[RMDB]
RNA sequence: GGGAACGACUCGAGUAGAGUCGAAAAGAAGGGUGAAAGCCCUUGAAACUGUAGUGGAAAUUAUAAAUAAGAAGAGUUCUGAGUUGCUUAAGCAGAACUAAAAUAAAAAGACAAGCAUUAUUACAAACAUGGCGAGGUAAGUUCGCUUACCUCGCAAGACAUUAACAUGGUUCGCCAUGUUAAUGUCAAAAGAAACAACAACAACAAC
Reactivity to DMS in 0.01 (KOAc 150mM, MgCl2 10mM, bicine 150mM(pH8.5), 24C), signal-to-noise 2, nucleotides 027 to 156: g000a030a010g010g050g030u010g040a100a110a300g030c030c000c030u030u000g010a050a080a140c100u010g000u000a060g000u010g030g000a110a020a100u000u000a080u010a100a080a130u000a070a210g000a150a230g010a110g000u000u000c010u000g010a130g020u000u010g010c050u010u010a080a120g010c050a040g010a010a050c030u000a070a080a090a070u010a000a100a190a150a080g000a130c130a020a070g000c050a070u000u000a050u000u010a110c110a070a050a070c010a060u000g020g000c000g000a010g000g020u000a000a010g010u000u010c300g030c000u010u000a000c030c000u010c010g000c000a020a050
Reactivity to 2A3 in 0.01 (KOAc 150mM, MgCl2 10mM, bicine 150mM(pH8.5), 24C), signal-to-noise 4, nucleotides 027 to 156: g070a000a000g010g010g000u030g030a050a010a020g000c000c000c000u000u000g000a040a030a000c050u050g030u120a040g040u060g030g060a050a060a050u150u090a120u190a220a100a070u210a070a020g060a060a020g040a010g060u010u000c000u000g030a040g020u090u090g070c020u080u010a110a010g000c010a000g010a000a000c040u050a000a020a000a010u090a020a090a010a000a010g040a010c030a020a000g000c000a010u030u090a060u080u110a170c090a050a150a000c050a080u120g070g000c000g000a000g000g000u000a000a000g000u020u030c040g010c040u000u000a000c010c000u000c000g000c000a000a000